This 170-nucleotide RNA was probed chemically with 2A3 and DMS. For 2A3, 7,168 sequencing reads were counted. Values cover nucleotides 27 to 129. The RNA was probed in 150 mM KOAc, 10 mM MgCl2 and 150 mM bicine (pH 8.5) at 24 C.

RNA sequence: GGGAACGACUCGAGUAGAGUCGAAAAUACAAAAGUUCAAGGUUUGGAAAACAUUGCUUUUAAUGUUGUUAAACAAGGCCAUUUUAUUGGUGUUGAGGGUGAACUACCUGUAGCUGUAGUCAAUGAUAUGCUCACCAGUUCGCUGGUGAGAAAAGAAACAACAACAACAAC
Reactivity to 2A3 in 0.01 (KOAc 150mM, MgCl2 10mM, bicine 150mM(pH8.5), 24C), signal-to-noise 5, nucleotides 027 to 129: u300a030c080a000a090a000a000g020u030u100c040a020a000g100g050u040u120u130g160g000a040a130a010a030c020a040u030u040g080c040u060u090u090u140a080a050u050g000u040u000g040u020u110a070a090a010c060a090a030g080g000c010c020a010u040u090u120u170a130u100u090g000g000u040g060u090u030g000a080g010g040g030u020g040a070a000c030u030a030c030c010u040g050u080a000g010c060u030g010u020a040g030u020c000a020a010u040g060a030u070a020u200g010
Reactivity to DMS in 0.01 (KOAc 150mM, MgCl2 10mM, bicine 150mM(pH8.5), 24C), signal-to-noise 5, nucleotides 027 to 129: u000a100c140a000a050a080a070g030u010u030c070a020a020g010g030u010u010u030g000g030a060a060a080a040c050a070u020u020g000c100u030u030u030u030a050a100u000g000u000u000g000u020u010a040a090a120c040a040a050g000g000c000c000a040u020u020u020u030a080u090u010g010g070u000g030u000u000g030a050g040g000g000u000g030a060a020c050u000a010c020c000u060g040u070a030g040c110u030g030u030a040g020u040c090a060a080u000g020a060u000a040u070g020